[RMDB]
RNA sequence: GGGAACGACUCGAGUAGAGUCGAAAAAUACACUAGCAGUAGGACUCAGCGACCGUCACAACAAGGUUGUGCUGGUAUCCGACGGUCGUAUAGCCCUGUCUUGCAGGUUGCCUUGCACUGACGUGCCACACCAUUUACAGAUUCGUCUGUAAAUGAACUUAUAUAUGGACUUCGGUCCAUAUAUAAGAAAAGAAACAACAACAACAAC
Reactivity to DMS in 0.01 (KOAc 150mM, MgCl2 10mM, bicine 150mM(pH8.5), 24C), signal-to-noise 5, nucleotides 027 to 156: a110u000a080c060a090c060u000a120g060c030a050g010u010a030g010g010a040c010u000c130a240g010c010g010a030c010c010g020u000c020a200c070a110a070c040a050a110g010g010u000u010g010u000g030c020u000g020g020u000a060u010c060c030g010a030c010g030g010u000c030g020u010a060u000a050g020c010c000c010u010g010u000c040u000u000g050c040a130g010g000u000u000g000c030c130u000u020g010c010a080c040u000g010a120c170g000u000g000c020c060a090c050a130c110c000a020u000u000u000a010c010a010g000a060u000u000c300g030u000c000u000g000u000a010a010a010u000g000a040a120
Reactivity to 2A3 in 0.01 (KOAc 150mM, MgCl2 10mM, bicine 150mM(pH8.5), 24C), signal-to-noise 7, nucleotides 027 to 156: a000u160a000c090a020c090u040a050g010c010a010g010u070a010g000g010a020c020u030c110a020g010c000g000a000c000c000g020u010c020a030c010a110a120c040a170a100g120g040u070u050g050u120g070c090u080g040g050u090a110u100c060c060g010a000c000g000g000u010c020g010u070a070u090a090g000c000c000c000u020g050u100c050u040u150g010c010a020g040g000u050u070g030c010c010u040u090g010c020a020c050u150g070a050c120g030u020g010c030c020a100c010a030c030c000a000u000u000u000a000c000a000g010a020u020u100c140g090u000c090u000g000u010a000a000a000u010g000a020a010
An RNA of 207 nucleotides, treated with DMS and 2A3 and read out base by base. The reactions ran in a buffer of 150 mM KOAc, 10 mM MgCl2 and 150 mM bicine (pH 8.5), at 24 C. DMS adducts were read by reverse transcription with MarathonRT.